[RMDB]
RNA sequence: GGGAACGACUCGAGUAGAGUCGAAAAUGCGUUCGAAUGGACGUUCGUUGGACGAUCCUAUGAGCUAGAAUAUCAUAACGGGUGGAUCGCAGAGCCGGUAACAGAUUUAUUCUUGAAGUCCUUUGAAAGCUGAUAGCUGAUUCGUCAGCUAUCAGCUAAAAGAAACAACAACAACAAC
Reactivity to DMS in 0.01 (KOAc 150mM, MgCl2 10mM, bicine 150mM(pH8.5), 24C), signal-to-noise 1, nucleotides 027 to 126: u000g000c140g010u000u000c000g070a140a120u070g000g000a030c000g000u000u020c020g010u030u060g070g000a070c020g000a040u000c000c010u000a170u000g000a070g000c000u010a100g000a150a080u010a100u010c020a050u000a210a120c030g000g000g050u000g000g000a070u020c020g010c000a150g000a110g050c040c030g020g010u090a050a000c130a110g000a000u010u010u030a050u020u000c000u000u000g000a080a080g020u000c000c070u000u020u010g000a130a050
Reactivity to 2A3 in 0.01 (KOAc 150mM, MgCl2 10mM, bicine 150mM(pH8.5), 24C), signal-to-noise 2, nucleotides 027 to 126: u180g050c020g060u070u000c030g260a180a030u180g030g000a060c030g040u020u030c080g020u110u200g030g000a020c030g000a090u000c020c000u040a070u150g030a000g010c010u110a030g090a050a070u180a130u160c060a060u050a180a030c110g060g030g070u020g120g030a040u020c000g000c080a030g030a020g010c030c000g000g090u050a130a040c010a040g000a100u180u120u050a030u140u060c050u000u000g010a050a010g010u000c000c000u080u000u000g150a170a130
The record gives the reactivity of an RNA of 177 nucleotides to DMS and 2A3. For 2A3, 1,013 sequencing reads were counted. 2A3 adducts were read by reverse transcription with SuperScript II with manganese. For DMS, 1,746 sequencing reads were counted. The data come from the RNA Mapping Database (RMDB), library OK1LIB. Conditions: 150 mM KOAc, 10 mM MgCl2 and 150 mM bicine (pH 8.5), 24 C. Reactivities are given for positions 27 through 126.